Structure probing data (2A3 and DMS) for a 177-nucleotide construct. Values cover nucleotides 27 to 126.

[RMDB]
RNA sequence: GGGAACGACUCGAGUAGAGUCGAAAAUGGUGUUAAGUGGAAUAAGUGGAAAAAUAUACAUAUAUGUACAGGGGGCUACAUAUAUGUAUAUGCCCCCUCGUCUAAGUAUAAGUAGGUAUAAGGUGGACGUAGUAAUACUAUUCGUAGUAUUACUACGAAAAGAAACAACAACAACAAC
Reactivity to 2A3 in 0.01 (KOAc 150mM, MgCl2 10mM, bicine 150mM(pH8.5), 24C), signal-to-noise 8, nucleotides 027 to 126: u100g010g020u070g010u090u100a110a060g040u060g060g050a100a080u090a150a050g020u100g040g060a030a060a010a080a030u060a000u020a010c020a010u110a000u030a010u080g040u070a010c070a070g020g000g000g020g010c010u010a000c030a020u080a000u040a020u120g020u030a010u010a000u030g010c010c000c000c000c000u000c010g010u000c010u030a060a050g030u030a040u010a100a060g060u070a020g050g040u060a090u020a120a060g060g010u060g020g000a010
Reactivity to DMS in 0.01 (KOAc 150mM, MgCl2 10mM, bicine 150mM(pH8.5), 24C), signal-to-noise 7, nucleotides 027 to 126: u020g010g000u010g010u000u010a040a120g010u010g000g010a090a050u020a060a080g020u010g000g000a030a080a060a090a050u010a020u000a010c000a040u010a070u010a030u020g000u020a020c060a050g010g010g000g000g010c110u000a030c040a040u020a070u020a030u020g000u010a020u010a030u010g000c050c010c010c010c010u000c050g000u010c030u010a030a090g010u000a020u000a030a090g000u010a030g000g010u010a050u020a060a060g000g020u010g000g000a260